[RMDB]
About this RNA
This 177-nucleotide RNA was probed chemically with DMS and 2A3. For DMS the reverse transcriptase was MarathonRT. It was measured as part of the RMDB library TTRDEL. For DMS, 2,520 sequencing reads were counted. As a SHAPE reagent, 2A3 marks flexible, mostly unpaired nucleotides at the ribose 2'-OH. The 2A3 profile rests on 3,301 reads.
RNA sequence: GGGAACGACUCGAGUAGAGUCGAAAAGAUAUGGAUCUUUCAGCGAGCUUGUCGGAAACGACUGAGCGAUGAGCUGAUGGAUCCUAAGUCAAAGGGAAAAAUUAAGGUUCGCCUUAAUUUUUCCCAAGACUUGAAUUCAGUUCGCUGAAUUCAAGUCAAAAGAAACAACAACAACAAC
Reactivity to DMS in 0.01 (KOAc 150mM, MgCl2 10mM, bicine 150mM(pH8.5), 24C), signal-to-noise 3, nucleotides 027 to 126: g010a070u000a300u010g010g010a020u000c000u000u000u000c010a000g010c030g010a260g020c000u000u000g000u000c000g020g000a120a130a190c000g010a010c000u020g020a000g010c000g000a140u010g000a220g020c010u000g010a020u000g000g000a020u000c000c000u000a020a070g000u000c030a100a140a170g000g000g000a000a020a020a010a000u000u000a010a000g020g020u000u010c300g030c000c000u000u000a000a000u000u000u000u010u000c000c010c000a010a030
Reactivity to 2A3 in 0.01 (KOAc 150mM, MgCl2 10mM, bicine 150mM(pH8.5), 24C), signal-to-noise 2, nucleotides 027 to 126: g010a010u110a030u210g010g000a010u000c000u000u030u000c010a010g010c000g090a020g020c010u010u000g010u000c000g020g010a080a050a050c020g020a020c040u240g070a010g010c000g170a240u240g100a030g000c000u000g000a010u000g020g000a010u020c000c000u020a060a010g020u010c040a030a050a220g000g000g000a000a000a030a000a000u010u010a000a010g050g000u020u130c230g050c010c010u010u000a000a010u000u030u000u000u000c010c010c000a000a010